[RMDB]
RNA sequence: GGGAACGACUCGAGUAGAGUCGAAAACGAUUAGCAUUCGUGCUAAUCGAAUCAGGUAGUACCUAUCUCUAUUACCUGUAGUGGCCAACGUCCGGAGAGAGAAUCGAGUCCUGUUCGCAGGACUCAACGCUACAAGCUCAUUCGUGAGCUUGUAGCGAAAAGAAACAACAACAACAAC
Reactivity to DMS in 0.01 (KOAc 150mM, MgCl2 10mM, bicine 150mM(pH8.5), 24C), signal-to-noise 1, nucleotides 027 to 126: c010g000a020u000u000a010g000c000a030u010u020c210g010u000g010c000u000a010a000u020c000g010a090a110u020c000a000g010g000u000a010g010u010a100c190c070u000a120u010c050u010c080u000a010u000u000a000c010c000u020g010u000a070g010u010g020g020c090c030a050a070c150g000u000c040c030g000g010a090g000a010g000a040g010a130a120u000c210g000a010g030u000c010c000u000g000u000u020c110g000c000a020g030g000a020c000u000c000a000a110
Reactivity to 2A3 in 0.01 (KOAc 150mM, MgCl2 10mM, bicine 150mM(pH8.5), 24C), signal-to-noise 2, nucleotides 027 to 126: c000g000a010u010u000a000g000c000a010u010u080c240g070u030g000c000u010a010a000u000c000g030a010a100u040c010a010g030g000u010a010g010u000a010c030c040u070a110u120c080u000c010u040a040u040u030a020c000c020u000g020u030a070g090u070g100g000c040c040a100a040c020g070u000c020c040g100g010a050g000a040g000a000g060a120a110u140c070g000a020g010u000c000c000u020g060u060u070c230g020c080a000g010g000a000c000u000c000a010a020

Overview:
Chemical mapping of a 177-nucleotide RNA with DMS and 2A3. For DMS, 1,061 sequencing reads were counted. 2A3 adducts were read by reverse transcription with SuperScript II with manganese. DMS adducts were read by reverse transcription with MarathonRT. The data come from the RNA Mapping Database (RMDB), library M2PK50. The RNA was probed in 150 mM KOAc, 10 mM MgCl2 and 150 mM bicine (pH 8.5) at 24 C.